Chemical mapping of a 177-nucleotide RNA with 2A3 and DMS. The data come from the RNA Mapping Database (RMDB), library M2PK50. DMS adducts were read by reverse transcription with MarathonRT. Conditions: 150 mM KOAc, 10 mM MgCl2 and 150 mM bicine (pH 8.5), 24 C. For 2A3 the reverse transcriptase was SuperScript II with manganese. The 2A3 profile rests on 1,101 reads.
[RMDB]
RNA sequence: GGGAACGACUCGAGUAGAGUCGAAAAGCUCAGGGGUUCGCCCCUGAGCAAAAGAUAGCGGUCUCGGUAUCAAAGUCAGUCCGACAGACCACAGGGAACUGAAAAGGGAGGGGUUCGCCCCUCCCAAGGCAAUAUCUUAGUUCGCUAAGAUAUUGCCAAAAGAAACAACAACAACAAC
Reactivity to 2A3 in 0.01 (KOAc 150mM, MgCl2 10mM, bicine 150mM(pH8.5), 24C), signal-to-noise 1, nucleotides 027 to 126: g000c000u000c040a010g000g010g020g010u060u070c090g130c000c050c030c000u000g010a000g000c000a000a000a000a020g000a020u120a040g020c030g000g020u050c060u030c070g000g000u100a090u060c110a120a060a050g130u020c020a000g030u050c030c000g020a020c060a020g010a010c030c000a020c000a030g040g000g070a070a170c060u030g010a070a090a020a190g000g000g000a000g000g020g000g010u020u100c180g130c000c010c030c010u000c000c000c000a000a000
Reactivity to DMS in 0.01 (KOAc 150mM, MgCl2 10mM, bicine 150mM(pH8.5), 24C), signal-to-noise 2, nucleotides 027 to 126: g000c000u010c000a010g000g010g010g000u000u000c160g010c050c010c000c010u010g000a000g010c000a000a050a080a120g010a120u000a040g030c020g010g000u010c030u000c020g040g020u000a060u010c080a070a100a150g000u010c170a080g020u000c020c020g040a120c110a100g040a090c020c040a090c110a070g000g020g000a080a150c080u010g010a010a040a100a180g000g010g010a030g000g020g020g030u000u010c150g000c000c020c000c000u000c000c000c010a010a010